[RMDB]
RNA sequence: GGGAACGACUCGAGUAGAGUCGAAAAUAUUUAUUGCGAGUGCAUGGAAGAGGCGAAUAGAGAACGGAACGUUGUCCACCCCUUCAAUCAUCAUCAAAUUGGAUUGCGGGCACUUUACCACGGUCGAGUAAAAACAUUGUUUCGACAAUGUUUUUACAAAAGAAACAACAACAACAAC
Reactivity to 2A3 in 0.01 (KOAc 150mM, MgCl2 10mM, bicine 150mM(pH8.5), 24C), signal-to-noise 9, nucleotides 027 to 126: u170a050u090u200u040a140u080u100g040c030g020a030g080u070g030c040a050u080g050g010a060a020g020a040g050g010c030g020a040a030u070a090g080a020g010a070a000c020g010g040a050a020c050g040u050u040g030u030c000c010a040c010c020c000c000u040u030c010a020a050u020c030a040u020c000a010u030c040a030a060a120u130u170g040g010a020u010u040g020c030g000g000g000c020a010c000u050u070u070a050c020c010a040c040g030g020u040c030g020a030
Reactivity to DMS in 0.01 (KOAc 150mM, MgCl2 10mM, bicine 150mM(pH8.5), 24C), signal-to-noise 9, nucleotides 027 to 126: u040a040u030u010u020a070u030u020g010c060g010a080g020u010g010c050a050u010g010g010a080a060g010a080g010g000c040g020a070a070u020a090g010a090g000a080a080c100g010g010a070a090c080g020u000u000g010u000c020c040a110c060c040c010c020u010u020c050a020a030u010c070a060u020c060a060u030c160a040a060a080u010u030g010g000a050u000u010g010c300g000g010g000c070a020c050u010u000u020a070c040c030a080c120g010g000u000c050g000a170